[RMDB]
An RNA of 177 nucleotides, treated with 2A3 and DMS and read out base by base. The DMS profile rests on 1,804 reads. Values cover nucleotides 27 to 126. 2A3 adducts were read by reverse transcription with SuperScript II with manganese.
RNA sequence: GGGAACGACUCGAGUAGAGUCGAAAAUAUAUGUCCUGAUUUGAUGCUUUUAUUGAAGAUAAAAUCUAUCUCAUCACAGGGUAUAGUCACCGGUGAUGAACUCCUUUUCCAUCAUUUCUUGGUGAGAAUCGGACUAUGGUUUCGACCAUAGUCCGAUAAAAGAAACAACAACAACAAC
Reactivity to 2A3 in 0.01 (KOAc 150mM, MgCl2 10mM, bicine 150mM(pH8.5), 24C), signal-to-noise 5, nucleotides 027 to 126: u200a000u030a050u040g050u020c010c010u030g040a090u050u040u060g040a050u070g050c050u060u050u050u130a190u110u300g090a060a030g000a040u070a060a100a040a010u010c030u050a090u040c050u030c020a040u030c000a010c000a050g030g030g120u080a070u130a180g130u110c010a010c050c000g000g010u000g000a010u020g040a050a050c080u170c030c010u100u080u110u050c050c010a030u020c020a080u060u030u060c100u040u090g030g020u050g030a140g080a040
Reactivity to DMS in 0.01 (KOAc 150mM, MgCl2 10mM, bicine 150mM(pH8.5), 24C), signal-to-noise 1, nucleotides 027 to 126: u070a070u020a000u010g010u010c000c040u030g000a070u000u020u000g000a040u070g000c250u000u000u000u040a060u070u020g010a070a040g030a050u000a010a000a090a270u010c030u040a060u060c080u010c020a020u000c050a030c060a040g000g010g000u000a030u000a110g010u020c060a060c000c060g060g020u000g000a050u000g000a010a050c120u000c060c010u000u000u030u040c050c000a050u000c020a010u000u030u050c060u030u010g010g080u000g000a030g000a030